[RMDB]
RNA sequence: GGGAACGACUCGAGUAGAGUCGAAAAUCAGUGUCUUCUUCCUCUUCACUGUCUGAGAUCACAAUACAUCCAGAGGUGGGUUGGAUGUCCUGGCCCUUGUACCUGAUGAAAGAUUCACCCUCCUGCUUAAUCUCUGAUGGCUUCAGCAUGCACGUGGUGACUGAUUACCUUUCGAGGUAAUCAGUCAAAAAGAAACAACAACAACAAC
Reactivity to 2A3 in 0.01 (KOAc 150mM, MgCl2 10mM, bicine 150mM(pH8.5), 24C), signal-to-noise 3, nucleotides 027 to 156: u120c030a000g030u020g040u090c060u090u000c010u040u030c040c010u040c030u090u060c030a040c060u110g170u140c010u040g100a120g020a200u060c090a080c040a180a110u140a160c030a040u030c020c010a020g020a020g040g050u030g000g020g000u000u070g020g010a040u040g020u010c000c040u030g030g040c010c010c000u010u050g040u050a070c010c010u040g020a070u050g060a130a040a020g080a130u070u090c030a050c010c000c020u030c010c020u020g020c020u040u100a080a060u030c040u000c030u060g080a070u080g060g000c010u020u020c020a000g010c020a010u040g010c070a010c060g130u150g050g040
Reactivity to DMS in 0.01 (KOAc 150mM, MgCl2 10mM, bicine 150mM(pH8.5), 24C), signal-to-noise 2, nucleotides 027 to 156: u010c050a090g030u010g000u010c020u000u010c060u010u010c040c010u000c080u000u020c040a100c060u020g000u000c030u000g000a130g010a070u000c050a090c020a100a140u010a110c050a050u000c030c030a060g010a290g030g020u000g010g010g030u010u020g030g010a110u000g010u000c040c010u000g010g020c030c030c060u000u020g060u000a080c040c020u010g010a080u010g020a080a080a110g010a160u000u000c000a070c060c030c010u000c020c020u000g000c070u000u000a070a090u000c030u000c030u000g010a110u010g000g010c030u010u000c050a110g010c030a050u000g010c040a050c070g050u000g020g010
Chemical mapping of a 207-nucleotide RNA with 2A3 and DMS. The RNA was probed in 150 mM KOAc, 10 mM MgCl2 and 150 mM bicine (pH 8.5) at 24 C. High 2A3 reactivity points to a flexible backbone, as in loops and unpaired stretches.